RNA sequence: GGGAACGACUCGAGUAGAGUCGAAAACACCGUUUCGACGGUGGCAACGUCCUAAGUCCACCGCCGAGAUCUAUUGUCAGCUGCUGUCGGAAACGACAGACAGCUUGGAUUUAUAGAUUAUCGGUGGAUAUGGAGGUGUAACGGGUUCGCCCGUUAAAAAUUAUCUCAGGUUCGCCUGAGAUAAUUUAAAAGAAACAACAACAACAAC
Reactivity to DMS in 0.01 (KOAc 150mM, MgCl2 10mM, bicine 150mM(pH8.5), 24C), signal-to-noise 3, nucleotides 027 to 156: c000a010c000c010g030u010u010u010c170g030a030c010g010g020u010g010g010c050a090a060c060g000u000c040c000u010a100a200g020u000c010c010a090c010c010g020c070c040g000a120g000a010u000c000u010a010u000u000g000u000c020a060g000c000u000g000c000u000g020u000c000g000g010a190a160a300c010g010a010c010a010g000a090c010a000g000c010u000u000g030g010a020u000u000u000a020u000a020g010a020u000u000a100u000c000g010g020u000g020g000a070u010a130u010g020g020a100g050g030u000g030u000a060a040c000g010g010g010u010u000c250g030c010c000c000g030u000u000a010a070
Reactivity to 2A3 in 0.01 (KOAc 150mM, MgCl2 10mM, bicine 150mM(pH8.5), 24C), signal-to-noise 2, nucleotides 027 to 156: c020a010c010c010g010u080u070u130c210g150a020c000g050g000u050g020g000c110a120a050c050g170u050c000c020u040a130a040g080u010c000c010a010c010c050g000c010c020g050a080g020a030u000c000u000a010u010u020g030u020c000a000g010c010u000g000c000u000g020u010c000g000g060a130a090a080c020g000a000c000a000g010a200c000a020g000c000u000u030g020g000a000u000u300u040a020u010a000g010a010u020u030a300u290c000g000g010u000g000g000a020u050a130u100g000g000a020g040g040u110g090u070a010a010c010g030g000g020u040u090c170g090c020c000c000g050u030u050a020a020